[RMDB]
RNA sequence: GGGAACGACUCGAGUAGAGUCGAAAAACGGAUGGUACACCAUCCGACCAUUGGGUAGAAGCGUUCAAUCAGCACCGUGACGGUGCAGAUGGGAAAUUGCCCAUGAUACGCACCAUACGUGGUGCGAAAAAGCCAUCGGUGUUCGCACCGAUGGCAACUAUCGGGUAAGCUUCGGCUUACCCGAUAGAAAAGAAACAACAACAACAAC
Reactivity to 2A3 in 0.01 (KOAc 150mM, MgCl2 10mM, bicine 150mM(pH8.5), 24C), signal-to-noise 2, nucleotides 027 to 156: a000c010g000g000a000u010g000g130u220a060c140a120c170c000a000u000c000c000g000a010c000c000a080u010u000g000g000g000u040a020g050a120a010g000c050g020u090u080c010a000a100u020c020a040g000c000a000c030c000g090u140g260a210c260g020g000u010g000c020a010g000a000u010g050g010g000a040a050a070u040u040g000c000c000c030a000u040g060a010u020a030c040g000c000a010c000c010a000u080a090c300g120u120g040g000u000g000c000g020a010a000a000a020a000g000c000c000a000u000c000g000g000u010g030u030u130c130g060c080a000c000c000g010a000u000g000g000c000a000a000

Notes
This 207-nucleotide RNA was probed chemically with 2A3. For 2A3 the reverse transcriptase was SuperScript II with manganese.